RNA sequence: GGGAACGACUCGAGUAGAGUCGAAAAUAUUCAGCUACGACGCAUACACGCACGAUGGCCGUGCCGACGGGCCCACGGAGCAAGACAGGUUCGAAGAGAGUCGGGCGCUCUACCAAGCGUCGGGCGGCAAGGUUGUAUGAUUCGUCAUACAACCUUGAAAAGAAACAACAACAACAAC
Reactivity to 2A3 in 0.01 (KOAc 150mM, MgCl2 10mM, bicine 150mM(pH8.5), 24C), signal-to-noise 9, nucleotides 027 to 126: u250a030u080u110c040a020g010c020u100a090c030g060a010c020g020c030a040u070a150c060a020c110g040c030a020c050g100a100u100g080g000c030c010g020u070g170c020c010g060a050c020g010g030g010c000c010c010a030c040g030g000a040g010c020a070a030g080a060c050a060g040g030u030u060c030g050a140a030g090a040g010a010g090u010c000g020g010g000c030g010c000u010c000u020a090c030c030a100a020g030c000g000u000c000g010g000g000c000g000g010
Reactivity to DMS in 0.01 (KOAc 150mM, MgCl2 10mM, bicine 150mM(pH8.5), 24C), signal-to-noise 9, nucleotides 027 to 126: u030a070u040u030c060a100g010c030u010a070c030g010a050c050g020c040a110u020a090c160a120c140g000c040a040c070g020a180u030g010g010c040c040g010u000g000c030c020g010a050c070g000g000g010c020c020c040a100c120g010g010a050g010c020a080a130g010a100c090a090g000g020u010u000c020g010a120a150g010a150g010a040g020u000c020g010g000g000c110g000c010u000c030u010a190c130c130a100a140g000c010g010u000c000g000g000g000c000g000g000
Structure probing data (2A3 and DMS) for a 177-nucleotide construct. DMS adducts were read by reverse transcription with MarathonRT. Values cover nucleotides 27 to 126.